[RMDB]
RNA sequence: GGGAACGACUCGAGUAGAGUCGAAAAGAUAUGGACUGCUACAGAGCUGAUCGGAAACGAUACCAGCGACGAAGUAGUCAGUCCUAAGUCAAAGAGCAAAAGGGUUGUUCGCAACCCUUUUGCUCAACAUCUCUCAAACCUUCGGGUUUGAGAGAUGAAAAGAAACAACAACAACAAC
Reactivity to DMS in 0.01 (KOAc 150mM, MgCl2 10mM, bicine 150mM(pH8.5), 24C), signal-to-noise 1, nucleotides 027 to 126: g010a010u010a300u010g000g010a000c010u000g000c020u030a010c000a070g010a240g020c000u000g000a040u000c000g010g010a120a070a130c000g000a030u000a190c300c000a010g000c000g000a200c260g010a150a090g000u000a010g000u000c020a000g010u000c000c000u000a010a090g020u020c040a060a110a220g000a010g010c000a000a000a000a030g000g020g000u000u000g010u010u010c210g030c010a000a000c000c000c000u000u000u000u000g000c010u000c010a020a070
Source: RMDB library TTRDEL, as collected in RNAgym. This 177-nucleotide RNA was probed chemically with DMS. The DMS profile rests on 915 reads.